Background: This 177-nucleotide RNA was probed chemically with DMS. DMS (dimethyl sulfate) methylates the pairing face of unpaired adenines and cytosines. The reactions ran in a buffer of 150 mM KOAc, 10 mM MgCl2 and 150 mM bicine (pH 8.5), at 24 C. For DMS the reverse transcriptase was MarathonRT.

RNA sequence: GGGAACGACUCGAGUAGAGUCGAAAAAAAAGAUAUGGAUGUCCGGACGGAGCAGGAGAGGGACGCUCGGAAACGAGCGUCCUCCCCACCUCCUGAACUACUCCAAACGGACAUCCUAAGUCAAAAACUAAAUGUAUUGGUUCGCCAAUACAUUUAGAAAAGAAACAACAACAACAAC
Reactivity to DMS in 0.01 (KOAc 150mM, MgCl2 10mM, bicine 150mM(pH8.5), 24C), signal-to-noise 2, nucleotides 027 to 126: a130a060a140a190g000a020u000a050u000g000g010a040u000g000u010c000c000g030g000a140c300g000g000a000g040c050a010g000g030a010g030a110g030g020g000a010c030g040c000u000c000g000g000a000a010a020c010g010a010g050c000g000u000c010c030u000c050c000c000c030a300c050c000u000c000c000u000g000a050a020c060u000a300c000u000c010c010a090a300a300c030g010g000a000c030a000u000c000c010u000a000a030g000u010c000a100a090a140a090a200